[RMDB]
Chemical mapping of a 177-nucleotide RNA with 2A3 and DMS. For DMS the reverse transcriptase was MarathonRT. Conditions: 150 mM KOAc, 10 mM MgCl2 and 150 mM bicine (pH 8.5), 24 C.
RNA sequence: GGGAACGACUCGAGUAGAGUCGAAAAGCUUAUAUGCAGCAAAAACAUACGUUGCUUCCGUGGCGGACUGUAUUGAAAAAUAUACACCUAAACUCGGAAUUAGGAGGGAAACAUAAGCGUUUCCGUACACUAGCAGUUUGUUCGCAAACUGCUAGUGAAAAGAAACAACAACAACAAC
Reactivity to 2A3 in 0.01 (KOAc 150mM, MgCl2 10mM, bicine 150mM(pH8.5), 24C), signal-to-noise 1, nucleotides 027 to 126: g000c010u020u070a020u040a030u270g020c000a000g000c010a100a030a030a130a000c060a020u160a060c030g050u040u010g000c010u050u000c020c020g010u010g000g000c010g010g050a040c170u050g000u000a010u000u000g070a000a010a000a010a000u270a010u020a050c030a030c010c020u060a150a120a050c020u030c030g010g070a070a110u110u080a070g060g030a080g000g090g030a000a080a050c040a040u060a000a000g000c000g040u010u000u000c010c000g000u010a020
Reactivity to DMS in 0.01 (KOAc 150mM, MgCl2 10mM, bicine 150mM(pH8.5), 24C), signal-to-noise 2, nucleotides 027 to 126: g000c020u000u000a050u010a080u030g000c020a010g000c030a020a000a030a090a140c260a120u010a060c160g010u000u010g000c000u000u000c010c000g000u000g010g020c140g010g020a140c210u000g000u000a000u010u010g000a020a100a070a070a120u000a000u010a030c000a030c020c010u020a030a020a110c060u020c050g000g000a060a080u000u000a060g030g010a090g010g000g000a060a050a060c120a060u000a040a010g020c060g000u010u010u010c000c000g000u000a150